[RMDB]
RNA sequence: GGGAACGACUCGAGUAGAGUCGAAAAGAUAUGGAGGACAGCAAGAUGGAGCGGAUGACAAUGAUGCCUUUCGGAAACGAAAGGUUGAGUCAUCCGCUUUUCAUUGAUGACCUGUCCUCCUAAGUCAGUACGAUAAGGAGUUCGCUCCUUAUCGUACAAAAGAAACAACAACAACAAC
Reactivity to DMS in 0.01 (KOAc 150mM, MgCl2 10mM, bicine 150mM(pH8.5), 24C), signal-to-noise 2, nucleotides 027 to 126: g010a050u010a300u030g010g000a000g020g010a040c010a000g020c040a040a120g010a010u010g000g000a010g030c010g010g030a000u000g010a040c000a300a210u010g020a110u000g000c010c000u000u000u000c000g010g000a160a110a250c020g000a030a010a000g010g030u000u000g000a060g040u000c000a000u010c000c000g000c000u000u010u000u000c000a000u000u000g010a060u020g000a050c300c010u000g000u000c000c000u000c000c020u000a000a050g000u000c000a170

Source: RMDB library TTRINS, as collected in RNAgym. The record gives the reactivity of an RNA of 177 nucleotides to DMS. DMS adducts were read by reverse transcription with MarathonRT. The reactions ran in a buffer of 150 mM KOAc, 10 mM MgCl2 and 150 mM bicine (pH 8.5), at 24 C.